Structure probing data (2A3 and DMS) for a 207-nucleotide construct.

RNA sequence: GGGAACGACUCGAGUAGAGUCGAAAAGGACAGUGACGAUUGAUAUUUAAGGUCUCGUUCGUCGUAAAAACGGCCGUAAAAAGCCUAUUUGCCGACCAUUCUGUUAUAUCACCACCCAUAUUCUGAGUCCAAAAUCAAAUAGGUUCGCCUAUUUGAAACACCAGUAUUAGUUCGCUAAUACUGGUGUAAAAGAAACAACAACAACAAC
Reactivity to 2A3 in 0.01 (KOAc 150mM, MgCl2 10mM, bicine 150mM(pH8.5), 24C), signal-to-noise 4, nucleotides 027 to 156: g030g000a020c040a040g040u060g040a030c040g040a110u070u160g020a020u060a070u100u160u130a140a060g030g000u020c030u030c080g030u080u070c020g020u020c010g010u030a000a010a000a060a050c080g000g000c010c000g020u030a020a000a020a020a010g010c000c010u010a050u000u030u040g030c020c020g010a020c020c000a010u060u030c010u040g120u160u050a050u010a010u100c020a020c020c020a040c010c020c020a030u040a100u180u070c070u090g050a030g040u020c030c010a040a020a030a130u060c000a000a000a000u000a000g000g040u030u030c120g130c020c000u000a000u000u010u000g020a020a010
Reactivity to DMS in 0.01 (KOAc 150mM, MgCl2 10mM, bicine 150mM(pH8.5), 24C), signal-to-noise 2, nucleotides 027 to 156: g020g020a070c030a050g020u020g020a090c070g010a100u010u020g010a080u000a060u000u000u000a080a130g000g010u000c020u000c040g010u000u000c040g030u000c050g000u000a030a080a040a110a150c220g000g030c000c040g020u010a110a070a200a130a100g000c010c020u000a300u000u000u000g000c050c030g080a030c010c030a140u000u000c040u000g010u010u000a080u000a120u000c030a010c050c020a080c020c000c040a140u000a070u020u000c040u000g000a180g020u000c020c030a070a050a080a170u000c000a000a040a010u000a040g010g070u000u010c300g050c010c010u000a010u000u000u000g000a030a140
It was measured as part of the RMDB library RFM130. The 2A3 profile rests on 5,303 reads.